[RMDB]
About this RNA: This 177-nucleotide RNA was probed chemically with DMS and 2A3.
RNA sequence: GGGAACGACUCGAGUAGAGUCGAAAAGAUGCGCUCCCCGAACGCGUCGCGAAGUUCUUCGAUACGCUGGGGCCGAUCGGCGUCGACGGCAUCACCGUGUCGCCGGGCUACGCGUACGAGCGCGCGAUGCUCGCGCUAAUUUCGAUUAGCGCGAGCAAAAAGAAACAACAACAACAAC
Reactivity to DMS in 0.01 (KOAc 150mM, MgCl2 10mM, bicine 150mM(pH8.5), 24C), signal-to-noise 2, nucleotides 027 to 126: g010a120u000g010c000g020c040u000c030c020c030c130g020a070a120c110g000c030g010u000c040g000c020g000a090a100g010u000u000c020u000u000c030g000a090u000a000c000g020c030u000g020g020g000g010c020c000g020a150u000c040g030g010c000g000u000c010g010a010c010g000g000c140a160u020c200a100c050c010g020u000g030u000c000g000c030c020g000g000g020c010u000a090c060g000c000g020u000a020c030g000a050g000c120g010c010g000c040g020a070
Reactivity to 2A3 in 0.01 (KOAc 150mM, MgCl2 10mM, bicine 150mM(pH8.5), 24C), signal-to-noise 1, nucleotides 027 to 126: g060a070u160g040c010g000c050u120c010c000c010c010g070a120a000c050g000c010g050u080c010g000c000g080a100a030g070u150u040c000u060u070c000g120a180u000a020c010g040c020u050g300g180g000g000c010c020g180a300u270c000g040g060c080g100u110c070g180a010c000g000g000c050a100u090c070a020c030c020g010u000g010u010c010g000c020c000g000g010g000c010u000a010c050g010c000g000u030a010c020g000a000g030c010g000c010g000c020g010a010
It was measured as part of the RMDB library OK2TRN. For 2A3 the reverse transcriptase was SuperScript II with manganese. The reactions ran in a buffer of 150 mM KOAc, 10 mM MgCl2 and 150 mM bicine (pH 8.5), at 24 C.